[RMDB]
RNA sequence: GGGAACGACUCGAGUAGAGUCGAAAAAACGCAAGCUACCGUGAUCAUCGAAGCUGGUGAGACGUCUGGAACCUUGAUACAAGCGCAAGCCGCCCUGAACCAAGGACGCAAGCUGUUCAUUCUUGAAAGCAAUUUCAAUAACCCGGCGAUUACCUGGACCUAGAUAUCGUUUCGACGAUAUCUAGGUAAAAGAAACAACAACAACAAC
Reactivity to 2A3 in 0.01 (KOAc 150mM, MgCl2 10mM, bicine 150mM(pH8.5), 24C), signal-to-noise 3, nucleotides 027 to 156: a000a000c090g030c030a000a000g020c010u050a050c060c000g110u070g070a080u090c120a030u050c040g060a070a030g070c070u040g010g000u030g020a040g000a040c020g020u010c050u040g010g030a050a040c010c030u030u050g010a020u050a130c050a110a080g010c000g000c070a060a060g010c040c030g030c020c020c020u020g050a060a040c060c000a060a010g030g000a010c030g010c070a030a070g020c010u040g100u030u050c050a050u120u120c050u050u080g030a010a020a010g000c010a070a210u070u050u060c040a070a040u090a080a090c050c000c000g000g010c010g040a030u030u060a020c000c010u020g030g050
Reactivity to DMS in 0.01 (KOAc 150mM, MgCl2 10mM, bicine 150mM(pH8.5), 24C), signal-to-noise 2, nucleotides 027 to 156: a050a020c070g010c050a050a110g010c020u010a070c050c030g020u020g010a160u000c070a060u000c050g000a140a130g030c050u010g000g010u000g010a070g010a080c060g000u000c050u010g040g020a100a110c080c000u000u000g020a180u020a110c070a080a120g000c020g000c010a080a130g000c100c020g000c000c010c020u010g020a070a100c070c050a080a060g020g010a050c030g010c030a090a150g050c010u000g030u000u010c030a220u000u020c080u000u000g000a080a040a110g000c070a060a120u010u000u000c020a020a060u000a080a130c020c000c000g000g020c020g000a120u000u010a060c000c000u000g000g000